Source: RMDB library TTRDES, as collected in RNAgym. The record gives the reactivity of an RNA of 177 nucleotides to 2A3 and DMS. The RNA was probed in 150 mM KOAc, 10 mM MgCl2 and 150 mM bicine (pH 8.5) at 24 C. For DMS, 3,773 sequencing reads were counted. Values cover nucleotides 27 to 126. As a SHAPE reagent, 2A3 marks flexible, mostly unpaired nucleotides at the ribose 2'-OH.
RNA sequence: GGGAACGACUCGAGUAGAGUCGAAAAGAUAUGGAAUCGAGUGCGAGUCCGUGGUCGGAAACGACCACAGGACGAUGAGCACCGAUUCCUAAGUCAAAUCCACAAAGUACUUCGGUACUUUGUGGAAGAUUGAACUCUACUUCGGUAGAGUUCAAUCAAAAGAAACAACAACAACAAC
Reactivity to 2A3 in 0.01 (KOAc 150mM, MgCl2 10mM, bicine 150mM(pH8.5), 24C), signal-to-noise 2, nucleotides 027 to 126: g000a000u000a000u070g000g010a000a000u010c010g020a120g140u010g030c030g030a030g020u000c000c000g010u010g000g000u000c010g000g000a010a000a000c000g000a010c000c010a000c000a010g000g000a000c000g020a130u170g000a010g010c000a010c000c000g010a000u010u030c000c000u000a000a010g000u000c000a000a000a200u000c010c000a000c010a000a000a000g000u010a010c010u120u270c300g070g000u010a000c000u020u060u000g010u030g000g000a020a020
Reactivity to DMS in 0.01 (KOAc 150mM, MgCl2 10mM, bicine 150mM(pH8.5), 24C), signal-to-noise 2, nucleotides 027 to 126: g000a020u000a020u020g000g000a040a000u000c000g010a110g010u000g010c000g000a030g000u000c000c010g020u000g010g020u010c000g020g000a000a000a010c010g020a010c010c000a010c010a040g070g010a010c010g000a090u010g010a250g000c000a010c000c000g000a010u010u000c000c000u000a000a060g000u010c000a110a140a220u000c010c000a010c000a010a010a010g010u000a010c000u000u020c280g030g020u000a000c000u000u000u000g030u000g010g000a000a010